[RMDB]
RNA sequence: GGGAACGACUCGAGUAGAGUCGAAAAGAUAUGGAUCCUACUAAGCUUUGAUCUGUAAGUAUCGGAAACGAUACACAGGGAGCUUAUUAGGAUCCUAAGUCAAAACGUCGAACUUCGGUUCGACGAACCAACUAAAUAUCUUCGGAUAUUUAGUUGGAAAAGAAACAACAACAACAAC
Reactivity to 2A3 in 0.01 (KOAc 150mM, MgCl2 10mM, bicine 150mM(pH8.5), 24C), signal-to-noise 8, nucleotides 027 to 126: g010a000u020a010u060g000g000a010u000c000c000u000a000c040u000a010a010g010c010u300u300u050g020a030u050c000u000g110u060a300a200g010u000a100u000c000g000g000a030a010a010c000g010a000u000a000c020a000c000a010g010g010g000a010g000c000u000u000a010u020u010a000g010g000a000u000c000c000u000a000a000g000u000c010a010a010a130a200c030g000u000c000g000a000a010c000u070u110c300g150g000u010u010c000g000a000c000g000a010a030
Reactivity to DMS in 0.01 (KOAc 150mM, MgCl2 10mM, bicine 150mM(pH8.5), 24C), signal-to-noise 6, nucleotides 027 to 126: g010a040u000a210u010g000g010a010u000c000c000u000a010c140u010a000a010g020c010u000u000u020g000a030u020c000u000g000u000a150a170g020u000a000u000c000g010g000a050a050a110c010g000a010u000a010c000a070c010a020g000g000g000a000g020c000u000u000a000u000u000a000g000g010a000u000c000c000u000a010a060g000u000c020a100a060a130a230c020g010u000c000g010a010a000c000u000u010c250g030g010u000u010c010g000a010c000g010a040a080